An RNA of 177 nucleotides, treated with 2A3 and DMS and read out base by base. The reactions ran in a buffer of 150 mM KOAc, 10 mM MgCl2 and 150 mM bicine (pH 8.5), at 24 C. Source: RMDB library OK2TST, as collected in RNAgym. DMS adducts were read by reverse transcription with MarathonRT. High DMS reactivity at an A or C suggests that its Watson-Crick edge is free.
RNA sequence: GGGAACGACUCGAGUAGAGUCGAAAAUGAGGUUUUACAGAUGGAGAAAAGAGCCAGAACAAAACCCUCACAACACACUCCAGUCUACUGCAAUGACAUCUUUAAAGCCUCAGCUGGAGCAGGACAACAUUAUUUAUCGAUUCGUCGAUAAAUAAUGAAAAGAAACAACAACAACAAC
Reactivity to 2A3 in 0.01 (KOAc 150mM, MgCl2 10mM, bicine 150mM(pH8.5), 24C), signal-to-noise 8, nucleotides 027 to 126: u030g000a010g000g000u000u020u030u040a030c030a010g030a020u030g070g030a140g130a140a210a070a030g050a020g060c080c030a030g050a100a030c050a070a120a050a080c020c000c000u050c010a080c020a050a080c050a010c000a000c040u000c010c010a020g020u010c030u100a150c030u070g010c020a030a080u130g040a070c000a030u020c010u030u080u050a030a040a000g000c000c000u010c010a000g000c010u020g010g000a030g010c050a050g040g040a030c020a110a000
Reactivity to DMS in 0.01 (KOAc 150mM, MgCl2 10mM, bicine 150mM(pH8.5), 24C), signal-to-noise 9, nucleotides 027 to 126: u000g020a030g020g020u000u000u000u000a030c070a040g010a060u000g010g010a220g000a140a080a130a110g010a130g010c080c060a030g000a120a120c100a060a070a110a160c040c020c010u000c110a060c110a070a080c110a070c120a110c040u000c010c020a030g000u000c050u000a070c080u000g000c090a080a080u000g010a120c020a020u000c010u000u000u010a020a030a030g000c000c000u000c010a030g000c040u000g010g010a050g010c080a030g000g000a070c120a060a170